This 177-nucleotide RNA was probed chemically with DMS and 2A3. DMS adducts were read by reverse transcription with MarathonRT. 2A3 adducts were read by reverse transcription with SuperScript II with manganese. For DMS, 1,039 sequencing reads were counted.
RNA sequence: GGGAACGACUCGAGUAGAGUCGAAAAUGUCCCAGUUUCGACUGGGACAAAAGCAUGAGGAGGAUCAAAGAUCAAAGCCGUCGCUCAUGCGUAAAGACGGCAAAAGGCUAGUGUUCGCACUAGCCAACGGGAAGAUACAGUUCGCUGUAUCUUCCCGAAAAGAAACAACAACAACAAC
Reactivity to DMS in 0.01 (KOAc 150mM, MgCl2 10mM, bicine 150mM(pH8.5), 24C), signal-to-noise 1, nucleotides 027 to 126: u000g000u000c000c010c000a040g000u000u000u010c170g020a020c000u000g010g000g000a010c000a000a010a070a100g000c000a010u000g010a040g010g030a180g000g000a050u010c150a090a100a090g030a110u000c110a070a070a180g030c000c010g010u000c010g000c020u000c040a020u000g000c040g020u010a050a110a160g010a010c000g000g000c000a070a060a060a090g000g010c000u000a000g020u000g010u010u010c300g010c000a000c030u010a000g010c000c020a010a020
Reactivity to 2A3 in 0.01 (KOAc 150mM, MgCl2 10mM, bicine 150mM(pH8.5), 24C), signal-to-noise 2, nucleotides 027 to 126: u070g000u000c010c000c010a000g000u000u030u070c210g110a010c010u000g010g000g000a010c010a000a070a000a000g020c020a010u030g010a010g090g030a050g050g040a070u140c150a170a130a050g050a030u060c080a060a080a070g010c020c010g030u030c000g060c020u020c020a010u020g000c010g000u010a010a000a000g020a020c010g000g030c000a020a100a000a000g000g000c000u000a000g000u010g060u090u110c250g000c080a000c000u000a010g000c000c000a000a000